Chemical mapping of a 177-nucleotide RNA with 2A3 and DMS. The 2A3 profile rests on 9,671 reads. Reactivities are given for positions 27 through 126. 2A3 is a SHAPE reagent: it acylates the 2'-hydroxyl of flexible nucleotides of all four kinds. Conditions: 150 mM KOAc, 10 mM MgCl2 and 150 mM bicine (pH 8.5), 24 C.
RNA sequence: GGGAACGACUCGAGUAGAGUCGAAAAACGCCGACGGAUGCUAUGAACACGCAGCGCCGUGGUACGACAAAGCGCUCCGGGAGGAGCCGCAGAACGUGCAGAUGCUCGUGCACAAAGCAGAAAACAGUCACCCUCAUUUAUUCGUAAAUGAGGGUGAAAAAGAAACAACAACAACAAC
Reactivity to 2A3 in 0.01 (KOAc 150mM, MgCl2 10mM, bicine 150mM(pH8.5), 24C), signal-to-noise 8, nucleotides 027 to 126: a000c080g060c040c020g050a040c050g080g050a040u060g010c000u030a030u180g040a070a010c010a000c040g070c080a030g010c010g050c060c040g300u070g040g000u030a010c010g010a010c030a040a120a030g000c000g000c010u000c000c020g040g040g020a120g000g000a010g040c030c040g000c010a010g050a100a010c000g000u020g000c010a000g020a120u100g010c000u010c030g050u020g010c010a010c040a070a110a000g020c030a020g070a050a080a020a040c020a000g050
Reactivity to DMS in 0.01 (KOAc 150mM, MgCl2 10mM, bicine 150mM(pH8.5), 24C), signal-to-noise 5, nucleotides 027 to 126: a070c180g010c040c010g000a100c180g010g000a130u010g000c030u000a040u010g010a080a120c000a030c010g010c130a020g020c020g040c050c050g020u000g010g030u010a020c000g000a090c090a070a220a140g010c010g000c010u000c000c000g000g120g010a270g000g000a020g010c080c040g010c010a050g020a140a060c040g020u010g000c000a100g000a100u000g010c020u000c030g020u010g000c300a070c050a030a040a040g000c040a050g000a130a070a110a140c200a100g020